[RMDB]
Description: Conditions: 150 mM KOAc, 10 mM MgCl2 and 150 mM bicine (pH 8.5), 24 C. An RNA of 177 nucleotides, treated with DMS and 2A3 and read out base by base. It was measured as part of the RMDB library OK1LIB. For 2A3, 1,987 sequencing reads were counted. The DMS profile rests on 5,010 reads.
RNA sequence: GGGAACGACUCGAGUAGAGUCGAAAAGAUCACAACCUCGGUGUUCCGAGCAUGUCGGUCCAGACGGCGGUCGCCGGGGUCACGGCUGGCAUCGAGGCAGCCAUUCGGCAGUCCGCAGAUAUCCGCGGAAAAGGCUACGUUUCGACGUAGCCUUUUCAAAAGAAACAACAACAACAAC
Reactivity to DMS in 0.01 (KOAc 150mM, MgCl2 10mM, bicine 150mM(pH8.5), 24C), signal-to-noise 3, nucleotides 027 to 126: g000a050u040c060a060c100a120a030c020c000u010c010g000g010u000g040u020u010c040c010g020a030g030c080a090u030g030u000c030g000g000u030c130c130a110g000a250c010g000g020c030g010g000u000c020g000c010c000g000g010g000g020u010c030a030c140g020g020c010u000g000g030c100a100u010c110g000a100g010g000c030a050g030c020c050a080u030u020c080g000g020c030a030g000u010c010c000g010c000a100g010a150u030a080u000c030c070g040c040g000
Reactivity to 2A3 in 0.01 (KOAc 150mM, MgCl2 10mM, bicine 150mM(pH8.5), 24C), signal-to-noise 3, nucleotides 027 to 126: g050a040u180c080a030c020a100a070c020c000u000c000g010g000u030g050u120u110c020c000g000a030g120c070a120u180g010u030c040g020g130u100c070c040a110g030a060c020g010g000c020g050g010u040c050g000c000c030g000g010g010g010u010c000a000c030g010g000c040u000g070g000c010a050u040c070g040a020g030g000c020a000g000c020c000a030u180u130c050g000g030c030a040g030u010c000c000g000c020a010g020a090u150a060u070c050c030g020c020g030